[RMDB]
RNA sequence: GGGAACGACUCGAGUAGAGUCGAAAAUUGGCGUGUAUAAUGGUUUUUCCGCCGUUUCAGAAGAAGGGAUACGGAAAAUUGUUGAUUCAGUUUAGUUACGAGCUAUCCCGCCGCGAAGGAUACAUUAGCAUGCACUCGUAUUCGUACGAGUGCAUGCAAAAGAAACAACAACAACAAC
Reactivity to DMS in 0.01 (KOAc 150mM, MgCl2 10mM, bicine 150mM(pH8.5), 24C), signal-to-noise 1, nucleotides 027 to 126: u010u020g010g020c060g060u000g000u000a040u000a020a020u020g010g000u000u020u010u000u000c030c010g000c000c000g020u000u000u010c090a090g040a170a160g020a130a100g000g000g000a040u000a120c020g000g010a030a000a010a080u000u000g000u000u000g040a130u000u000c080a000g010u000u000u000a020g010u000u000a080c080g000a060g000c150u010a020u000c000c000c000g030c080c080g020c100g000a110a060g020g010a090u000a070c120a100u010u000a090